[RMDB]
RNA sequence: GGGAACGACUCGAGUAGAGUCGAAAAGUACGUUUCGACGUACGUUCACCGUAGGCACCUACCCACCGGAUGGUUACGUUGAAACCAGCUUCGAAAGAGGCUGGUGGAGUAAGAAGUCCGAGGGUGCCUAAACGGAUAGUGCCACCUUCGGGUGGAAUGAUCUCGAUAAUUUCGAUUAUCGAGAUCAAAAAGAAACAACAACAACAAC
Reactivity to 2A3 in 0.01 (KOAc 150mM, MgCl2 10mM, bicine 150mM(pH8.5), 24C), signal-to-noise 5, nucleotides 027 to 156: g000u000a000c030g010u030u070u260c290g110a040c000g040u010a000c000g010u090u180c100a080c110c000g000u000a020g000g000c010a000c000c000u220a300c030c000c030a020c000c020g000g010a010u030g020g190u010u010a020c030g180u240u030g020a020a010a000c000c000a000g000c010u010u010c000g060a070a040a030g000a000g000g010c000u000g000g000u000g010g000a020g000u000a000a010g050a090a020g030u000c000c000g000a020g000g000g000u000g000c010c000u010a060a030a010c000g010g020a050u110a140g200u160g080c000c010a020c010c000u070u120c280g100g000g000u010g000g010a010a020
Reactivity to DMS in 0.01 (KOAc 150mM, MgCl2 10mM, bicine 150mM(pH8.5), 24C), signal-to-noise 4, nucleotides 027 to 156: g020u000a000c030g010u000u010u000c240g020a120c010g010u000a000c020g010u000u000c020a110c010c010g020u010a020g010g000c010a030c030c020u000a030c010c020c000a300c100c000g010g020a030u010g000g020u010u000a010c020g000u000u010g010a220a190a030c000c000a020g010c000u000u000c010g020a130a160a220g010a010g020g000c010u000g000g000u000g010g000a120g010u000a020a050g000a300a300g010u000c000c020g010a110g030g010g030u000g000c010c000u000a010a020a040c020g020g010a130u000a090g010u010g010c020c010a020c000c010u000u000c230g030g000g010u000g000g000a020a040
Conditions: 150 mM KOAc, 10 mM MgCl2 and 150 mM bicine (pH 8.5), 24 C. This 207-nucleotide RNA was probed chemically with 2A3 and DMS. The DMS profile rests on 11,885 reads.